[RMDB]
RNA sequence: GGGAACGACUCGAGUAGAGUCGAAAAUGCUUAUCCGUAGAUACAUGGAGAGCAAGGAAGCGGACGACUGGUUUAAUAAAAAAGCGGCCAUCUACUAUAACAAGAUUAUCAAGCCUUAUAUUGACGCAGAAAUAGCUAAAGUCAAUAAGAAAAUCGCAAGCACAUGAGAAUUCGUUCUCAUGUGCUUAAAAGAAACAACAACAACAAC
Reactivity to 2A3 in 0.01 (KOAc 150mM, MgCl2 10mM, bicine 150mM(pH8.5), 24C), signal-to-noise 1, nucleotides 027 to 156: u070g000c000u040u070a160u230c000c000g040u030a060g040a060u190a070c150a040u040g000g000a120g010a000g010c010a010a030g010g000a040a040g040c000g020g040a030c080g010a010c000u000g030g000u040u130u270a200a030u180a020a200a050a110a050a080g090c160g020g010c030c010a000u010c030u160a130c000u070a060u010a100a030c040a070a000g030a070u000u030a040u200c030a050a040g020c030c020u050u100a010u000a000u120u020g000a000c000g000c060a030g160a110a090a110u150a090g050c020u000a060a030a030g030u020c000a000a020u040a040a000g170a000a100a030a100u150c160g080c110